[RMDB]
RNA sequence: GGGAACGACUCGAGUAGAGUCGAAAAGCGUUCAUGAGCUUACAUGAACGAGAGCAUACUUAGUCCAAAGUAUGCAGAGCCUUCUGUAAGCUCAGAGGGCAGACUAAUGUUUGGACUAACAUUAGGAGGACAGCUAACUAUUCGUAGUUAGCUGUCCAAAAGAAACAACAACAACAAC
Reactivity to 2A3 in 0.01 (KOAc 150mM, MgCl2 10mM, bicine 150mM(pH8.5), 24C), signal-to-noise 2, nucleotides 027 to 126: g050c070g200u020u040c030a050u070g020a020g070c070u080u090a040c020a020u140g000a030a000c050g010a040g000a000g040c000a000u000a010c000u030u030a020g110u070c070c050a020a000a000g000u000a000u000g020c000a000g070a010g020c010c000u010u000c010u010g060u050a090a030g010c040u000c010a010g010a000g000g060g040c020a010g040a000c020u020a020a010u030g020u010u040u070g220g110a100c070u030a020a010c010a010u000u020a020g070g040a060
Reactivity to DMS in 0.01 (KOAc 150mM, MgCl2 10mM, bicine 150mM(pH8.5), 24C), signal-to-noise 2, nucleotides 027 to 126: g000c030g000u000u000c020a100u010g000a100g010c100u000u010a080c000a010u010g000a000a010c080g010a040g010a250g010c010a000u000a000c000u000u010a090g000u000c190c070a080a060a040g000u000a000u000g000c050a090g000a070g000c030c000u000u000c010u020g010u010a060a040g010c060u000c010a000g030a010g030g000g020c020a060g010a200c000u000a010a000u000g010u000u000u010g000g020a150c200u010a040a040c030a010u000u000a020g000g010a160